[RMDB]
RNA sequence: GGGAACGACUCGAGUAGAGUCGAAAAGGAAAUAAUGCACAUAAUCCAGUCGCAGACGCUAAAAAUAACGCUGCGUCGCGACGGAUGUGGCAACGCACACCGAAGUGCAAACCGUAGCGUAAAAAAACUCCCUCUCUAAGUUCGCUUAGAGAGGGAGAAAAGAAACAACAACAACAAC
Reactivity to DMS in 0.01 (KOAc 150mM, MgCl2 10mM, bicine 150mM(pH8.5), 24C), signal-to-noise 1, nucleotides 027 to 126: g010g010a080a120a120u020a110a140u000g010c020a010c000a040u000a040a080u000c000c000a090g020u000c010g020c000a140g040a030c010g030c010u050a000a020a130a080a120u050a080a120c090g000c080u000g010c020g050u000c030g000c000g050a030c000g010g000a010u000g030u000g010g000c000a140a030c180g010c070a060c050a100c020c100g000a100a100g000u000g020c040a040a050a140c070c030g030u030a070g000c020g040u000a000a000a080a000a080a030a050
Reactivity to 2A3 in 0.01 (KOAc 150mM, MgCl2 10mM, bicine 150mM(pH8.5), 24C), signal-to-noise 2, nucleotides 027 to 126: g030g030a080a100a050u190a050a070u110g020c030a040c010a200u230a180a100u220c010c030a050g020u020c000g000c040a050g000a000c010g000c030u070a120a020a000a030a130u300a140a050c050g000c150u050g000c020g010u000c010g000c000g000a000c000g000g020a020u000g010u020g020g000c010a060a030c030g010c010a010c010a020c000c110g080a170a050g020u020g010c000a000a000a140c020c020g050u040a010g040c040g050u080a050a000a010a000a000a050a030